[RMDB]
RNA sequence: GGGAACGACUCGAGUAGAGUCGAAAAGGGCGAUAAGGAGGGGCACAUGGAUCGCAAUCCAGCUGCAGGUGGUGUGGGUGGCCCUAGUGGCACUGCUCUCCUGGCUGGCUCAGCGCCACCUGUCACAUCAACGACUAAGGUUCGCCUUAGUCGUUGAAAAAGAAACAACAACAACAAC
Reactivity to DMS in 0.01 (KOAc 150mM, MgCl2 10mM, bicine 150mM(pH8.5), 24C), signal-to-noise 3, nucleotides 027 to 126: g010g020g020c060g010a080u010a100a110g030g010a090g000g010g010g030c090a090c080a080u000g020g000a030u000c210g000c090a080a120u000c020c010a060g000c140u000g030c030a020g000g000u000g000g030u020g060u010g010g000g020u000g030g000c000c010c050u020a090g020u000g010g000c010a300c110u010g000c050u010c020u000c060c040u000g000g020c010u010g010g020c060u000c040a080g010c050g000c010c020a050c030c020u000g010u000c080a040c100a160
Reactivity to 2A3 in 0.01 (KOAc 150mM, MgCl2 10mM, bicine 150mM(pH8.5), 24C), signal-to-noise 2, nucleotides 027 to 126: g020g010g020c020g050a050u020a160a040g070g010a030g000g000g000g030c020a010c030a090u090g050g000a040u060c050g030c100a020a050u050c010c040a010g030c080u080g000c000a010g020g030u030g050g020u050g000u010g010g070g090u050g050g010c000c000c000u000a020g040u210g030g000c040a020c160u070g000c010u030c010u030c070c010u050g000g000c040u020g080g000c000u020c020a050g050c000g000c020c000a040c000c000u040g000u080c020a020c010a100
The record gives the reactivity of an RNA of 177 nucleotides to DMS and 2A3. The reactions ran in a buffer of 150 mM KOAc, 10 mM MgCl2 and 150 mM bicine (pH 8.5), at 24 C. Reactivities are given for positions 27 through 126. DMS adducts were read by reverse transcription with MarathonRT.